[RMDB]
RNA sequence: GGGAACGACUCGAGUAGAGUCGAAAAGAUAUGGACGUCACAUGGAGUCUAGGAUCGGAAACGAUCCUGAGACGUUGAAAUGUAGCGUCCUAAGUCAAACGCCAGGGAAGUUCGCUUCCCUGGCGAACGUAACUAACUUGUUCGCAAGUUAGUUACGAAAAGAAACAACAACAACAAC
Reactivity to DMS in 0.01 (KOAc 150mM, MgCl2 10mM, bicine 150mM(pH8.5), 24C), signal-to-noise 4, nucleotides 027 to 126: g010a020u000a020u020g000g000a020c000g030u000c060a010c000a000u000g000g020a040g030u000c000u000a040g000g000a000u000c000g020g000a010a010a020c000g010a010u000c000c000u000g000a020g020a010c000g030u000u010g000a130a300a010u000g010u000a050g010c010g020u000c000c000u000a000a080g000u000c000a110a140a300c030g010c000c000a010g000g010g020a030a010g020u000u010c300g010c000u000u010c000c000c000u000g000g000c000g010a000a020
Reactivity to 2A3 in 0.01 (KOAc 150mM, MgCl2 10mM, bicine 150mM(pH8.5), 24C), signal-to-noise 4, nucleotides 027 to 126: g010a000u010a010u040g000g000a000c000g010u090c020a000c020a030u030g050g060a060g010u000c010u010a010g010g000a000u000c000g000g030a000a000a000c000g000a000u000c000c010u010g060a040g000a000c000g070u160u170g050a020a010a000u010g000u010a010g020c000g000u010c000c000u000a000a000g000u000c010a130a070a100c020g000c000c000a000g040g010g010a040a010g020u120u210c290g140c190u000u000c000c000c000u000g000g010c000g000a000a000